[RMDB]
Record summary
This 177-nucleotide RNA was probed chemically with 2A3. It was measured as part of the RMDB library OK1LIB. Reactivities are given for positions 27 through 126.
RNA sequence: GGGAACGACUCGAGUAGAGUCGAAAAGAACAGACUCUUUAAGUCUGAUAAGAAACAUUUACCAUGUAUUCUCUCUGAAGCCUGCUACCUGGAGGCUUCUUUGGCAUUAUGAAACCUUGGCCUCCACGCCGGUACCAGGUUUCGACCUGGUACCGGCAAAAGAAACAACAACAACAAC
Reactivity to 2A3 in 0.01 (KOAc 150mM, MgCl2 10mM, bicine 150mM(pH8.5), 24C), signal-to-noise 1, nucleotides 027 to 126: g020a090a030c000a000g000a000c040u160c120u140u280u280a100a000g000u000c000u000g070a120u100a100a000g200a000a050a000c080a020u000u060u210a180c100c100a100u010g030u050a250u160u000c000u010c010u030c000u070g020a070a000g020c020c010u040g080c010u050a100c000c000u030g000g000a000g020g000c010u100u000c000u080u000u060g000g000c040a000u010u130a110u220g090a090a050a050c000c000u000u000g000g000c000c000u000c010c040a110c030